This 177-nucleotide RNA was probed chemically with DMS and 2A3. The RNA was probed in 150 mM KOAc, 10 mM MgCl2 and 150 mM bicine (pH 8.5) at 24 C. For DMS the reverse transcriptase was MarathonRT. For 2A3 the reverse transcriptase was SuperScript II with manganese.
RNA sequence: GGGAACGACUCGAGUAGAGUCGAAAAGUGCUUGAGCAGGAUGUCGAUCCGGAAAGACAUCUGUCGUUGCGACGAGAGUUCGAUCCGAUCCGGAAAGCAUUUGCUCUCUUUGUGCUCUUGCACGAAAGGGUGUGCCGUGCUUCGGCAUGGUACACCCAAAAGAAACAACAACAACAAC
Reactivity to DMS in 0.01 (KOAc 150mM, MgCl2 10mM, bicine 150mM(pH8.5), 24C), signal-to-noise 6, nucleotides 027 to 126: g020u000g010c020u000u000g000a020g030c010a050g000g010a010u010g030u030c020g000a290u000c020c020g000g010a030a300a190g010a020c040a020u000c000u000g010u000c020g010u000u020g040c140g020a030c000g000a020g010a020g000u000u010c100g020a090u010c050c020g000a210u010c000c010g000g000a020a120a220g020c060a050u010u010u000g010c040u000c050u000c050u000u010u010g010u000g030c010u000c030u000u000g000c000a010c000g010a040a070a100
Reactivity to 2A3 in 0.01 (KOAc 150mM, MgCl2 10mM, bicine 150mM(pH8.5), 24C), signal-to-noise 9, nucleotides 027 to 126: g010u010g000c010u010u010g000a000g000c010a010g020g040a020u020g070u260c030g020a070u010c020c010g010g010a020a010a000g010a000c010a020u000c000u020g140u010c010g050u050u110g090c160g060a010c010g010a010g000a000g050u090u120c110g030a170u010c060c010g030a110u020c000c000g000g000a010a010a000g010c010a020u020u040u160g040c020u020c000u010c030u130u130u160g100u040g010c000u000c000u020u030g000c000a000c010g010a070a020a010